Structure probing data (DMS and 2A3) for a 177-nucleotide construct.
For 2A3, 1,544 sequencing reads were counted.
[RMDB]
RNA sequence: GGGAACGACUCGAGUAGAGUCGAAAAAGGGAGCCUGAGAAACGGCUACCACAUCUAAGGAAGCCAGCAGGCUCGGGGAGAUAGUGACGAAAAAUAACAAUACAGGACUCAUAGCCGAGGCCCUGUAGUUCUUUCAUCGUUUCGACGAUGAAAGAACAAAAGAAACAACAACAACAAC
Reactivity to DMS in 0.01 (KOAc 150mM, MgCl2 10mM, bicine 150mM(pH8.5), 24C), signal-to-noise 2, nucleotides 027 to 126: a100g030g000g010a060g000c010c000u000g010a100g020a040a090a070c130g000g030c000u000a090c000c000a150c240a150u060c260u070a120a070g000g000a210a010g000c000c020a050g000c060a010g000g010c000u000c020g000g000g000g000a090g000a030u000a110g010u010g000a070c130g000a020a040a070a030a040u010a030a130c170a120a260u060a010c000a000g000g010a300c010u000c000a100u000a190g000c220c070g000a010g000g000c030c010c010u000g000u000a000
Reactivity to 2A3 in 0.01 (KOAc 150mM, MgCl2 10mM, bicine 150mM(pH8.5), 24C), signal-to-noise 3, nucleotides 027 to 126: a000g090g030g000a020g000c020c000u050g010a070g140a070a200a030c080g020g000c000u040a010c000c000a070c020a120u150c070u130a020a140g010g010a010a010g000c030c000a010g010c020a000g010g000c020u000c010g000g010g010g000a080g000a050u110a070g100u090g050a020c050g100a020a040a060a020a050u180a070a030c060a100a000u010a040c010a000g000g010a000c000u010c010a030u150a060g040c070c070g010a000g000g040c040c000c000u010g000u000a010
DMS adducts were read by reverse transcription with MarathonRT.